[RMDB]
RNA sequence: GGGAACGACUCGAGUAGAGUCGAAAAUAGUUCACGCUUCCUCUACACAAAGAUGUGGGAUCUUAAGUGCAUCGCCUCAGCUCUCUGCUUCACCGUGAGCAAUAUUCUCUAUGUCGUGCACGGCAUCCCCACCCAUACUUUUCGAAGUAUGGGUGGGAAAAGAAACAACAACAACAAC
Reactivity to DMS in 0.01 (KOAc 150mM, MgCl2 10mM, bicine 150mM(pH8.5), 24C), signal-to-noise 3, nucleotides 027 to 126: u000a080g020u000u010c030a040c060g000c090u000u000c000c020u000c080u010a080c120a050c100a080a110a070g010a090u000g020u010g000g020g010a070u010c040u000u000a080a090g000u000g020c070a050u000c100g000c010c030u020c050a110g000c020u010c030u000c070u010g000c040u000u000c050a110c130c050g020u020g000a050g020c040a070a100u010a090u000u000c050u010c080u000a050u000g010u000c040g020u010g020c110a080c030g000g000c130a040u000c090
Reactivity to 2A3 in 0.01 (KOAc 150mM, MgCl2 10mM, bicine 150mM(pH8.5), 24C), signal-to-noise 4, nucleotides 027 to 126: u080a010g020u050u020c010a000c010g010c040u070u010c010c030u000c030u060a050c070a000c020a100a170a060g070a120u070g030u070g060g000g060a070u010c030u130u180a220a170g080u050g070c020a040u080c050g050c020c010u040c010a000g010c000u020c000u010c020u050g010c040u080u070c040a070c040c030g040u060g000a000g010c020a030a020u120a070u090u050c020u010c020u040a060u100g090u030c020g020u040g080c050a020c050g000g010c020a070u060c000

Structure probing data (DMS and 2A3) for a 177-nucleotide construct. Reactivities are given for positions 27 through 126. DMS adducts were read by reverse transcription with MarathonRT.